[RMDB]
RNA sequence: GGGAACGACUCGAGUAGAGUCGAAAAACCUUUGUGCCUUAGGGAGCUAUUCAAAGGGCUCCGUCCCAUUGGGACGGAGAACUACCCUCGUUUAUUUAGCAUCGAUCUAAGGCACUCUGGUAAAAUCCUGCGCAACGAUUCGUCGUUGCGCAGGAAAGAAAAUGAUGAGGUUCGCCUCAUCAUUUUCAAAAGAAACAACAACAACAAC
Reactivity to 2A3 in 0.01 (KOAc 150mM, MgCl2 10mM, bicine 150mM(pH8.5), 24C), signal-to-noise 2, nucleotides 027 to 156: a000c000c010u030u000u000g010u000g000c000c000u020u000a000g000g000g040a020g020c000u010a000u110u100c100a190a080a040g000g010g000c010u000c010c020g000u010c040c000c100a300u160u300g020g000g000a000c020g000g000a000g000a010a010c060u190a090c000c010c000u010c020g060u030u180u200a160u110u130u020a020g010c000a130u300c080g040a010u020c020u000a000a000g000g000c010a000c000u000c000u000g000g010u020a080a020a000a170u020c000c020u010g000c000g000c000a010a000c000g020a000u060u110c190g000u000c010g000u170u000g020c000g040c000a000g010g010a000a000a000